The record gives the reactivity of an RNA of 177 nucleotides to 2A3 and DMS.

[RMDB]
RNA sequence: GGGAACGACUCGAGUAGAGUCGAAAAGCAGCAAAUUGCUGCGUUCUUUGAUGUCACCACCGAUGUGAUAUGGCAAGCCGCAGUUGGCAAAGGAAACGUAGGGGCCACGCUCGAACAUGAUGAUUUCCUUUCGUUGACUCUUCGGAGUCAACGAAAGAAAAGAAACAACAACAACAAC
Reactivity to 2A3 in 0.01 (KOAc 150mM, MgCl2 10mM, bicine 150mM(pH8.5), 24C), signal-to-noise 2, nucleotides 027 to 126: g040c000a020g000c000a030a140a300u190u210g000c000u000g030c020g010u020u080c010u050u050u100g040a070u040g080u070c020a000c000c020a030c000c070g050a150u170g060u050g020a040u050a000u050g040g000c070a100a030g010c040c020g070c080a040g020u110u040g040g000c030a060a080a000g030g010a030a050a020c000g040u050a080g000g000g050g000c000c000a020c000g000c000u030c020g030a060a000c020a120u060g060a100u030g030a060u040u000u000c000
Reactivity to DMS in 0.01 (KOAc 150mM, MgCl2 10mM, bicine 150mM(pH8.5), 24C), signal-to-noise 1, nucleotides 027 to 126: g020c010a000g010c030a050a190a120u050u030g040c000u000g010c000g010u010u000c030u000u000u010g020a130u000g000u000c030a030c100c110a140c180c160g020a140u000g000u000g000a000u000a030u020g000g090c010a070a050g000c130c060g040c050a110g000u000u000g000g000c070a030a040a240g000g000a030a050a070c060g000u000a090g000g000g000g000c020c070a150c040g010c000u000c090g000a000a000c050a170u030g000a100u000g020a120u020u000u000c000
The RNA was probed in 150 mM KOAc, 10 mM MgCl2 and 150 mM bicine (pH 8.5) at 24 C.
Values cover nucleotides 27 to 126.